[RMDB]
RNA sequence: GGGAACGACUCGAGUAGAGUCGAAAAUAAUUGUCCAGUUUGACUUACAUUAACAGCACUCGUCGGUUCGUAUGCAGCCGACAAACCUGCAUAACCAUAUUGAUUUGCUGCUUGUACAGGGGUUACGCUCUGUAGAUGACUUCGGUCAUCUACAGAGAAAAGAAACAACAACAACAAC
Reactivity to DMS in 0.01 (KOAc 150mM, MgCl2 10mM, bicine 150mM(pH8.5), 24C), signal-to-noise 3, nucleotides 027 to 126: u070a100a040u010u030g010u010c010c010a110g000u030u020u000g010a040c060u000u000a110c050a080u000u050a080a090c070a060g000c020a050c260u010c130g000u000c110g000g010u000u050c280g020u020a020u030g000c040a020g010c030c060g010a100c290a020a070a060c300c010u010g030c000a020u000a010a120c010c040a070u010a040u010u010g000a050u000u030u000g040c020u000g000c120u000u000g010u020a040c080a030g000g000g000g000u000u020a110c090g040
Reactivity to 2A3 in 0.01 (KOAc 150mM, MgCl2 10mM, bicine 150mM(pH8.5), 24C), signal-to-noise 4, nucleotides 027 to 126: u090a000a120u160u100g070u040c030c040a030g040u020u080u130g080a050c000u030u080a020c010a040u100u200a150a060c020a030g010c000a020c030u040c040g060u010c000g080g000u060u020c040g000u030a010u040g040c020a020g010c010c020g240a040c080a020a010a000c000c000u020g020c000a040u020a090a030c010c020a050u060a120u140u170g160a140u060u050u210g020c020u020g000c000u020u050g000u030a080c020a050g070g000g000g020u030u100a040c030g030
Structure probing data (DMS and 2A3) for a 177-nucleotide construct.
It was measured as part of the RMDB library OK1LIB.
The reactions ran in a buffer of 150 mM KOAc, 10 mM MgCl2 and 150 mM bicine (pH 8.5), at 24 C.